This 177-nucleotide RNA was probed chemically with DMS and 2A3. The RNA was probed in 150 mM KOAc, 10 mM MgCl2 and 150 mM bicine (pH 8.5) at 24 C. For 2A3 the reverse transcriptase was SuperScript II with manganese. The 2A3 profile rests on 1,358 reads. For DMS the reverse transcriptase was MarathonRT.
RNA sequence: GGGAACGACUCGAGUAGAGUCGAAAAGCAGGUGCCGCUGGCGAUGGUGCGCGGGCGGCACAGCAAGGUGGUGUUGCCGCACCACACCCGGCUGAUCCGGGCGAUGCCGCGCGGCGAGUUCAUGUCAAUACGUACCGAGGUUCGCCUCGGUACGUAUAAAAGAAACAACAACAACAAC
Reactivity to DMS in 0.01 (KOAc 150mM, MgCl2 10mM, bicine 150mM(pH8.5), 24C), signal-to-noise 2, nucleotides 027 to 126: g010c020a120g020g040u010g000c010c030g050c000u000g010g040c000g020a180u010g020g030u000g010c010g010c020g000g000g000c000g000g000c000a000c010a020g000c060a140a120g000g010u000g010g010u000g000u000u010g010c120c080g020c000a010c020c010a070c020a070c020c000c020g020g000c250u010g000a060u020c030c000g010g010g010c060g010a160u010g010c070c050g000c090g000c050g000g020c040g000a040g010u010u000c050a030u000g000u010c050a080
Reactivity to 2A3 in 0.01 (KOAc 150mM, MgCl2 10mM, bicine 150mM(pH8.5), 24C), signal-to-noise 1, nucleotides 027 to 126: g030c050a070g210g000u010g020c000c040g040c000u080g130g000c000g060a140u130g080g240u280g120c010g000c000g010g010g000c000g000g000c020a000c000a010g020c010a020a040g140g010u040g010g070u040g030u060u140g040c050c030g000c000a010c000c000a000c000a000c010c010c000g020g000c140u160g030a110u000c000c010g010g000g000c020g030a020u170g010c000c020g050c020g020c040g040g000c020g010a020g000u100u100c000a050u100g030u040c020a090